[RMDB]
RNA sequence: GGGAACGACUCGAGUAGAGUCGAAAAUGGGUAAAAACAGGGGCGGAGUUCGAAAUAAAGCAAAAAAGAGAAUAGCGCACAUAACGUGGUGUGCAUACCGCCCACUACGUUAACGCGGGAAUAGUAACUAGUAGCAGCUGUUCGCAGCUGCUACUAGAAAAGAAACAACAACAACAAC
Reactivity to DMS in 0.01 (KOAc 150mM, MgCl2 10mM, bicine 150mM(pH8.5), 24C), signal-to-noise 1, nucleotides 027 to 126: u000g000g000g000u040a050a040a070a110a070c120a060g000g000g000g000c120g000g000a060g060u000u000c020g000a070a090a110u030a040a060a080g010c140a000a100a080a130a080a100g010a080g010a000a090u000a130g030c030g010c050a030c120a280u000a000a000c010g010u000g010g000u000g000u000g020c000a050u010a040c260c090g000c000c010c000a020c000u010a030c000g050u010u000a020a100c180g000c010g000g020g030a070a060u010a020g020u000a020a080

About this RNA:
Structure probing data (DMS) for a 177-nucleotide construct. DMS adducts were read by reverse transcription with MarathonRT. DMS (dimethyl sulfate) methylates the pairing face of unpaired adenines and cytosines. The DMS profile rests on 623 reads.